[RMDB]
RNA sequence: GGGAACGACUCGAGUAGAGUCGAAAAGCCAGAUUUUCCAUUUUUCAACUCUUGAGUGCAGAGCUUCCUCCUCGGCCGGCGGUUCCGCGCUGACCUCUUUACAGUGUUCGAGAGUUUAGCGUGGCGAACCUCGCCCAUUAUUCGUAAUGGGCGAGGUAAAAGAAACAACAACAACAAC
Reactivity to 2A3 in 0.01 (KOAc 150mM, MgCl2 10mM, bicine 150mM(pH8.5), 24C), signal-to-noise 4, nucleotides 027 to 126: g090c040c020a060g040a120u110u090u040u040c020c050a080u060u020u020u040u170c040a060a060c040u010c010u090u120g060a060g080u060g030c040a020g020a020g110c040u050u010c010c000u030c000c010u010c020g000g010c010c010g020g000c020g020g010u090u010c010c000g000c000g000c000u000g010a010c020c000u000c020u040u040u040a100c140a280g090u050g150u300u130c110g010a010g000a000g000u010u060u000a000g000c020g020u030g010g000c010g000a010
Reactivity to DMS in 0.01 (KOAc 150mM, MgCl2 10mM, bicine 150mM(pH8.5), 24C), signal-to-noise 2, nucleotides 027 to 126: g030c020c040a090g000a190u030u000u000u000c020c000a160u020u000u020u010u000c060a070a050c080u000c030u000u030g000a050g020u010g000c020a110g000a110g000c080u010u000c000c000u010c040c000u030c060g010g000c040c050g000g000c050g010g040u040u000c000c010g020c000g000c000u000g020a010c070c040u000c030u000u000u020a100c190a130g030u040g020u000u050c120g000a010g000a110g020u000u000u000a000g000c010g000u010g000g020c240g000a090

An RNA of 177 nucleotides, treated with 2A3 and DMS and read out base by base. The DMS profile rests on 2,984 reads.